Annotation
Source: RMDB library M2RFPK, as collected in RNAgym. This 207-nucleotide RNA was probed chemically with DMS and 2A3. For DMS, 2,743 sequencing reads were counted. DMS adducts were read by reverse transcription with MarathonRT.
RNA sequence: GGGAACGACUCGAGUAGAGUCGAAAAACGGAUGGUACGCCAUCCGACCAUUGGGUAGAAGCGUUCAAUCAGCACCGUGACGGUGCAGAUGGGAAAUUGCCCUUGAUACGCACCAUACGUGGUGCGAAAAAGCCAUCGGUGUUCGCACCGAUGGCAACAAUCAGAAAGCGUUCGCGCUUUCUGAUUGAAAAGAAACAACAACAACAAC
Reactivity to DMS in 0.01 (KOAc 150mM, MgCl2 10mM, bicine 150mM(pH8.5), 24C), signal-to-noise 2, nucleotides 027 to 156: a180c040g040g000a020u000g000g040u000a130c280g060c010c010a040u000c000c000g020a020c080c000a210u000u030g020g030g000u000a030g000a060a100g000c080g030u010u000c030a040a040u010c000a110g020c000a020c000c010g000u010g000a240c260g080g040u000g000c010a020g000a040u000g000g010g000a050a110a150u000u000g020c000c000c020u010u000g010a150u010a110c040g000c000a030c000c000a110u000a090c300g000u000g020g080u000g000c000g000a000a040a080a110a060g020c000c000a000u000c000g030g070u010g010u010u000c300g010c020a050c010c000g000a000u000g000g000c010a000a000
Reactivity to 2A3 in 0.01 (KOAc 150mM, MgCl2 10mM, bicine 150mM(pH8.5), 24C), signal-to-noise 3, nucleotides 027 to 156: a010c000g000g000a020u000g010g020u060a040c220g020c050c000a000u000c010c000g000a000c000c000a090u120u170g010g000g000u030a030g020a140a020g060c050g040u060u080c050a040a060u020c040a040g020c000a010c000c020g150u270g200a150c210g010g000u000g000c010a010g000a000u000g000g000g040a000a110a080u040u010g010c000c000c020u000u110g090a090u070a060c010g000c000a000c000c000a020u020a110c300g030u040g010g000u000g000c000g000a050a020a000a000a000g000c000c000a000u000c000g000g000u010g030u040u120c220g030c050a000c000c000g000a000u000g000g000c000a000a000
For 2A3, 2,476 sequencing reads were counted.